Record summary
Structure probing data (DMS and 2A3) for a 207-nucleotide construct.

RNA sequence: GGGAACGACUCGAGUAGAGUCGAAAAAGGGCGUGUCGAGCACCAGUACGCUCGUAAAUCCACUGGAAAACUAUAAACGCCAACGACGAGCGUUUCGCUCUAGCCGCUUAAGGCUGGGCCACUGCACUAAUUUGUCUUUGGGUUAGGUAGGGCAACCCCCAGAAUUAUGGUUCGCCAUAAUUCUGGGAAAAGAAACAACAACAACAAC
Reactivity to DMS in 0.01 (KOAc 150mM, MgCl2 10mM, bicine 150mM(pH8.5), 24C), signal-to-noise 1, nucleotides 027 to 156: a030g000g030g010c030g010u000g030u000c050g010a080g030c020a120c090c060a150g020u000a050c070g010c000u000c020g000u010a050a050a050u000c020c090a060c050u000g050g000a120a040a130a070c070u000a050u010a150a110a050c070g010c020c020a030a080c090g010a050c060g020a100g000c010g010u000u000u020c020g030c030u000c000u000a080g020c010c020g000c300u010u000a130a110g010g030c050u000g050g000g010c030c030a080c010u000g000c000a150c050u020a030a140u000u010u030g010u020c040u030u000u000g000g020g000u010u000a010g030g030u020a040g010g010g020c070a120a080c050c080
Reactivity to 2A3 in 0.01 (KOAc 150mM, MgCl2 10mM, bicine 150mM(pH8.5), 24C), signal-to-noise 4, nucleotides 027 to 156: a000g050g000g000c030g010u060g040u130c010g000a000g020c000a030c030c000a000g020u020a010c010g010c010u010c000g010u030a010a030a020u040c040c030a040c020u020g030g000a080a070a050a010c130u110a090u160a230a070a020c070g030c040c010a050a020c070g090a010c010g020a020g010c000g010u070u050u080c030g010c000u030c020u060a000g010c000c020g080c090u170u130a110a010g010g000c010u010g000g000g000c030c010a070c050u090g000c050a040c150u090a150a110u140u070u160g020u020c020u030u070u080g040g000g010u010u050a040g020g050u010a000g000g010g000c010a020a050c020c020
Reactivities are given for positions 27 through 156.
For 2A3 the reverse transcriptase was SuperScript II with manganese.
The RNA was probed in 150 mM KOAc, 10 mM MgCl2 and 150 mM bicine (pH 8.5) at 24 C.
The data come from the RNA Mapping Database (RMDB), library RSTRND.